[RMDB]
RNA sequence: GGGAACGACUCGAGUAGAGUCGAAAAGGGUUUUGCGAUCUUUAAGCAGAUGGCAGGUUCACCCCGUACGGUGAGGAAGUUCGCGCUUCCGUGAAACGCGAAAAUCGGACGGUGGCUGCAAGUCGCAUUGAAGGGAUCGCCUUCGGGCGAUCCCUAAGAUUACGUAUGUGUUCGCACAUACGUAAUCAAAAGAAACAACAACAACAAC
Reactivity to 2A3 in 0.01 (KOAc 150mM, MgCl2 10mM, bicine 150mM(pH8.5), 24C), signal-to-noise 3, nucleotides 027 to 156: g040g010g000u050u060u080u090g020c010g020a080u080c060u060u160u110a170a070g040c080a090g050a140u130g070g000c010a000g000g030u100u100c050a060c000c010c000c000g020u030a010c040g020g020u040g040a060g020g080a070a050g040u080u120c040g010c010g010c040u050u000c030c020g040u040g050a090a080a010c050g000c010g060a030a000a030a030u060c000g010g010a010c040g060g000u080g040g020c020u020g000c020a010a060g020u010c020g010c040a040u000u150g060a030a050g000g010g000a010u010c000g000c010c000u060u080c140g060g000g000c000g010a010u010c010c000c000u000a010a000
Reactivity to DMS in 0.01 (KOAc 150mM, MgCl2 10mM, bicine 150mM(pH8.5), 24C), signal-to-noise 1, nucleotides 027 to 156: g000g010g020u010u000u010u010g020c050g000a020u000c030u000u000u020a130a170g000c070a000g000a070u020g020g010c020a040g020g020u010u010c060a070c000c010c000c010g010u000a020c040g010g000u000g010a110g050g000a110a140g040u000u010c030g030c040g000c010u000u000c020c210g010u010g030a050a040a010c020g010c000g010a040a030a110a080u000c020g010g000a020c010g010g020u000g030g020c030u000g020c030a070a110g010u000c010g010c030a140u000u000g040a100a060g010g000g000a030u010c030g040c000c010u000u000c280g010g040g000c000g000a010u000c000c000c000u020a000a040